[RMDB]
RNA sequence: GGGAACGACUCGAGUAGAGUCGAAAAGAUAUGGAAUACGUGGAGGUCCUAUAUUGAGGGCAACAGCGAAUCGGAAACGAUUCGACAUGCCUGUAAGUAUAGGACCGUUGAAACGUAUUCCUAAGUCCGUUAAAGGCAAGUUCGCUUGCCUUUAACGAAAAGAAACAACAACAACAAC
Reactivity to DMS in 0.01 (KOAc 150mM, MgCl2 10mM, bicine 150mM(pH8.5), 24C), signal-to-noise 4, nucleotides 027 to 126: g000a100u000a300u030g000g000a010a010u000a010c010g020u000g000g010a070g010g030u000c010c010u000a010u010a000u000u000g010a270g010g010g010c010a020a090c300a230g000c010g000a010a000u000c000g010g010a080a090a260c020g010a010u010u000c000g000a040c100a200u000g000c000c000u010g000u040a140a090g010u010a040u000a010g010g000a000c000c010g020u000u010g000a090a160a010c010g000u000a010u000u000c000c000u000a020a110g000u010c040
This 177-nucleotide RNA was probed chemically with DMS. Source: RMDB library TTRINS, as collected in RNAgym. Reactivities are given for positions 27 through 126.